[RMDB]
RNA sequence: GGGAACGACUCGAGUAGAGUCGAAAAGAUAUGGACCAUCCACGACGCGUUGAUCUCGGAAACGAGGGAGCGUACAAGUGGAGUGGUCCUAAGUCAAAACCGUAUAUUUGUUCGCAAAUAUACGGAAGCAAUUAGACCACUUCGGUGGUCUAAUUGCAAAAGAAACAACAACAACAAC
Reactivity to 2A3 in 0.01 (KOAc 150mM, MgCl2 10mM, bicine 150mM(pH8.5), 24C), signal-to-noise 1, nucleotides 027 to 126: g020a030u030a030u210g000g000a000c000c000a010u030c000c000a010c010g140a000c090g030c030g200u300u050g020a100u020c000u000c010g010g000a130a030a030c020g000a010g010g050g010a020g000c010g050u110a120c070a180a230g000u060g020g010a010g040u080g000g000u000c000c000u000a030a010g010u010c030a030a010a060a190c000c000g000u000a010u010a010u000u020u010g060u030u200c300g000c130a020a000a040u010a000u000a030c000g000g020a000a000
Reactivity to DMS in 0.01 (KOAc 150mM, MgCl2 10mM, bicine 150mM(pH8.5), 24C), signal-to-noise 1, nucleotides 027 to 126: g010a110u000a300u020g000g000a010c020c000a100u010c000c000a000c000g010a100c100g000c010g000u000u020g000a020u020c000u030c000g000g000a120a090a210c000g010a010g000g010g020a060g020c020g000u000a050c120a120a230g010u000g020g000a030g000u000g020g000u000c000c000u000a000a040g000u000c020a030a120a150a140c020c010g010u000a000u000a000u000u000u000g010u010u030c300g000c000a000a020a030u000a000u000a010c010g000g000a050a030
This 177-nucleotide RNA was probed chemically with 2A3 and DMS.
For 2A3, 1,463 sequencing reads were counted.
For DMS the reverse transcriptase was MarathonRT.
2A3 adducts were read by reverse transcription with SuperScript II with manganese.
The reactions ran in a buffer of 150 mM KOAc, 10 mM MgCl2 and 150 mM bicine (pH 8.5), at 24 C.
The data come from the RNA Mapping Database (RMDB), library TTRDEL.